RNA sequence: GGGAACGACUCGAGUAGAGUCGAAAAUUAUUCUGCCUAAUACCGAACAGCAAGAGUAUAAUAAAUAGCUUUUUUGGUUUUAUUUUAGUCAUGUAAACAAGAAUCUUCCGUUUGCCUGCUAAAAAGAGCCUUCUUUAUCAUUCGUGAUAAAGAAGGCAAAAGAAACAACAACAACAAC
Reactivity to DMS in 0.01 (KOAc 150mM, MgCl2 10mM, bicine 150mM(pH8.5), 24C), signal-to-noise 2, nucleotides 027 to 126: u020u000a160u000u020c110u010g010c000c000u000a100a060u000a070c090c080g010a020a040c300a020g020c010a050a060g020a140g000u000a070u000a090a160u020a010a090a110u020a130g010c020u000u010u000u000u000u000g000g010u000u010u000u010a100u010u030u000u000a010g000u010c010a040u000g010u010a010a010a000c040a060a110g000a020a100u000c200u000u000c020c090g010u010u000u000g000c020c040u000g010c010u000a020a030a010a040a140g010a180
Reactivity to 2A3 in 0.01 (KOAc 150mM, MgCl2 10mM, bicine 150mM(pH8.5), 24C), signal-to-noise 2, nucleotides 027 to 126: u080u020a080u080u080c030u030g060c010c010u080a120a040u070a110c020c010g010a020a000c000a020g010c010a080a080g060a020g180u160a150u050a300a080u090a050a070a020u070a070g000c000u080u080u030u020u060u130g020g000u060u060u040u100a090u000u030u020u010a080g030u180c000a020u040g000u030a020a000a000c030a000a070g090a150a200u110c070u170u030c070c030g020u010u000u000g010c000c010u020g000c020u040a010a040a000a040a010g080a010